[RMDB]
RNA sequence: GGGAACGACUCGAGUAGAGUCGAAAAGUGCCUCUGCCCCUCAGGGGGACUCUCGAGGUUUGGUACAAUAUCUAACCUUGUAUCAACAUUCAUCAAACACAUUCCGACUUCGUGUAACAACAGUGGACCUCGUAAUAGUCUUCGGACUAUUACGAGGAAAAGAAACAACAACAACAAC
Reactivity to DMS in 0.01 (KOAc 150mM, MgCl2 10mM, bicine 150mM(pH8.5), 24C), signal-to-noise 2, nucleotides 027 to 126: g020u020g030c010c030u000c020u000g000c120c040c060c030u030c100a160g020g000g000g010g010a020c060u000c050u000c110g050a070g010g010u000u010u030g010g020u000a030c030a020a010u000a060u020c210u010a090a140c200c130u000u000g000u000a000u000c040a020a030c190a130u010u010c060a040u010c120a090a120a100c080a020c030a100u000u000c040c000g020a100c060u000u000c120g000u030g000u020a070a110c080a050a090c100a040g010u010g010g010a190
Reactivity to 2A3 in 0.01 (KOAc 150mM, MgCl2 10mM, bicine 150mM(pH8.5), 24C), signal-to-noise 2, nucleotides 027 to 126: g020u020g060c010c000u000c000u020g050c040c000c000c000u020c050a060g000g040g020g010g030a020c030u070c000u040c130g030a030g090g000u020u070u040g000g000u030a010c030a060a050u050a060u220c120u100a050a170c020c000u030u010g020u010a010u030c000a010a040c000a070u080u190c010a100u070c070a140a140a020c100a010c020a130u140u000c030c030g130a060c080u150u080c140g030u000g030u090a090a050c060a020a010c000a020g040u040g040g050a030